[RMDB]
RNA sequence: GGGAACGACUCGAGUAGAGUCGAAAAGUGCUGAUAUUUCUGACACCAUUCCUGAUGAGAAACAGAAUGGUCACAGUUUAUAUCUAGCAGACAAUUUGACUGCUGAUGAAACAAAGGCGCUUAAAGAGGAGCGAUUGGUUCGCCAAUCGCAAAAGAAACAACAACAACAAC
Reactivity to 2A3 in 0.01 (KOAc 150mM, MgCl2 10mM, bicine 150mM(pH8.5), 24C), signal-to-noise 6, nucleotides 027 to 129: g020u000g010c010u010g020a010u010a030u060u040u010c000u000g010a030c000a000c070c000a000u010u040c030c020u030g010a120u100g070a050g120a050a110a010c000a010g000a000a000u000g010g000u020c020a010c000a050g030u020u070u010a090u000a010u000c090u090a010g000c000a010g030a030c030a110a150u130u130u250g080a070c020u030g000c030u030g020a100u050g040a050a020a070c070a020a080a030g030g010c000g010c010u030u090a040a050a000g120a020g150g050a100
Reactivity to DMS in 0.01 (KOAc 150mM, MgCl2 10mM, bicine 150mM(pH8.5), 24C), signal-to-noise 4, nucleotides 027 to 129: g040u030g030c000u000g000a080u020a040u020u050u040c000u030g000a270c300a060c020c020a040u000u030c070c080u030g000a210u010g000a180g050a180a140a000c010a030g000a000a000u000g000g020u000c170a290c000a000g010u000u000u000a090u020a040u000c020u000a020g050c020a010g010a030c110a160a150u030u040u020g040a090c000u000g000c020u000g020a010u000g020a050a050a030c130a000a060a150g020g030c000g070c010u000u000a000a080a060g030a080g030g010a160
The record gives the reactivity of an RNA of 170 nucleotides to 2A3 and DMS. Reactivities are given for positions 27 through 129.